Chemical mapping of a 177-nucleotide RNA with 2A3 and DMS. For DMS, 1,164 sequencing reads were counted. 2A3 adducts were read by reverse transcription with SuperScript II with manganese. The RNA was probed in 150 mM KOAc, 10 mM MgCl2 and 150 mM bicine (pH 8.5) at 24 C.
RNA sequence: GGGAACGACUCGAGUAGAGUCGAAAAGGAUGACAUAUUCACAACACUGCUGCCGCACAACCAUGGCGACGGCAAAAUCAUUAGGCUAAUAACGCUUAUUUGCAUUCUUAUCAUGCCGGCAGCUCGCAUUUUUCUCCCGGUUCGCCGGGAGAAAAAUAAAAGAAACAACAACAACAAC
Reactivity to 2A3 in 0.01 (KOAc 150mM, MgCl2 10mM, bicine 150mM(pH8.5), 24C), signal-to-noise 3, nucleotides 027 to 126: g080g050a050u060g050a030c030a050u230a080u190u140c120a040c010a100a100c060a070c060u110g000c000u000g000c000c000g060c040a050c050a140a050c040c080a080u090g010g040c050g020a010c020g000g000c030a000a000a000a060u090c080a080u100u120a000g030g000c080u100a280a020u110a270a020c090g000c020u040u070a030u020u040u000g000c000a020u020u040c010u020u100a160u250c000a000u000g000c000c000g000g010c000a000g010c030u040c020g060c030
Reactivity to DMS in 0.01 (KOAc 150mM, MgCl2 10mM, bicine 150mM(pH8.5), 24C), signal-to-noise 2, nucleotides 027 to 126: g010g000a020u000g000a030c270a020u030a050u000u000c030a080c180a220a020c120a030c220u050g010c000u030g010c020c000g000c190a090c290a080a160c300c080a030u040g020g000c060g000a070c060g000g000c010a040a000a020a130u070c190a020u110u000a080g000g030c020u060a160a110u090a170a120c300g010c000u010u010a040u000u000u000g000c060a000u020u030c120u050u030a180u000c040a020u020g000c140c030g000g000c030a030g000c000u030c000g000c180